The record gives the reactivity of an RNA of 177 nucleotides to DMS and 2A3. For DMS the reverse transcriptase was MarathonRT. The data come from the RNA Mapping Database (RMDB), library RFMREP. High 2A3 reactivity points to a flexible backbone, as in loops and unpaired stretches. Values are in units of 0.01, from 0 to 300, in steps of 10. The 2A3 profile rests on 5,134 reads. The RNA was probed in 150 mM KOAc, 10 mM MgCl2 and 150 mM bicine (pH 8.5) at 24 C.
RNA sequence: GGGAACGACUCGAGUAGAGUCGAAAAUCGACUUUCUGCCCCGGCGCCAGCGGCUCCGCGCUUGGCACAACAAUGGUAUGCGUGGUUUGCGGCCCUAAUUUAUUCAGCACGCGACUGCCGCAUCCCGGACGUAUUAAAAGUUCGCUUUUAAUACGUCAAAAGAAACAACAACAACAAC
Reactivity to DMS in 0.01 (KOAc 150mM, MgCl2 10mM, bicine 150mM(pH8.5), 24C), signal-to-noise 3, nucleotides 027 to 126: u000c070g000a110c120u000u000u000c050u000g000c080c020c040c140g010g010c090g000c020c020a050g010c030g020g000c080u020c070c080g000c040g010c030u030u000g010g000c020a050c100a050a060c190a080a100u000g000g010u000a040u000g010c030g000u010g010g000u010u000u010g060c000g000g000c030c070c070u010a050a070u010u000u010a120u030u010c190a080g020c050a090c000g020c000g000a030c020u000g010c170c030g020c020a020u000c050c000c020g020
Reactivity to 2A3 in 0.01 (KOAc 150mM, MgCl2 10mM, bicine 150mM(pH8.5), 24C), signal-to-noise 4, nucleotides 027 to 126: u040c000g020a020c030u060u080u060c050u100g030c000c000c010c020g100g000c030g000c030c020a040g020c030g090g000c080u050c060c050g050c010g030c040u140u120g020g020c020a010c010a040a070c030a040a180u160g000g010u030a000u030g010c010g000u010g000g070u040u070u290g010c000g010g010c010c020c000u090a120a150u100u160u230a200u090u180c080a020g020c050a030c080g020c000g020a010c020u040g100c090c030g000c000a010u060c030c010c000g040